[RMDB]
RNA sequence: GGGAACGACUCGAGUAGAGUCGAAAACGCUUCCAAACUGCUACGGAGAGGGAGGAGGAAGGCCGUGCCAAAGGAUAUUCUGGCGUGCUUGAAGCCGACCUGAUGAGGUCGGAAGCUAAAAUGGAAGCGCUGGCGAAUCCCGAUCCUAGUGCGACAGCGGGUGGGCAUUUUUCGAAAUGCCCACCCGAAAAGAAACAACAACAACAAC
Reactivity to 2A3 in 0.01 (KOAc 150mM, MgCl2 10mM, bicine 150mM(pH8.5), 24C), signal-to-noise 2, nucleotides 027 to 156: c010g000c010u020u010c000c010a100a130a150c100u150g000c050u080a040c130g000g030a030g000a020g020g030g020a000g030g000a010g080g030a090a040g100g000c090c010g040u100g020c010c010a090a070a000g190g010a170u080a120u300u100c030u040g000g020c030g000u040g010c030u010u060g040a100a020g040c000c000g030a020c000c010u230g120a300u170g230a010g030g000u000c000g000g000a000a000g000c010u060a000a060a080a100u080g010g010a010a000g000c010g000c100u060g030g010c000g050a070a070u010c000c000c000g000a010u030c010c000u000a010g010u000g090c020g030a060c020a030g020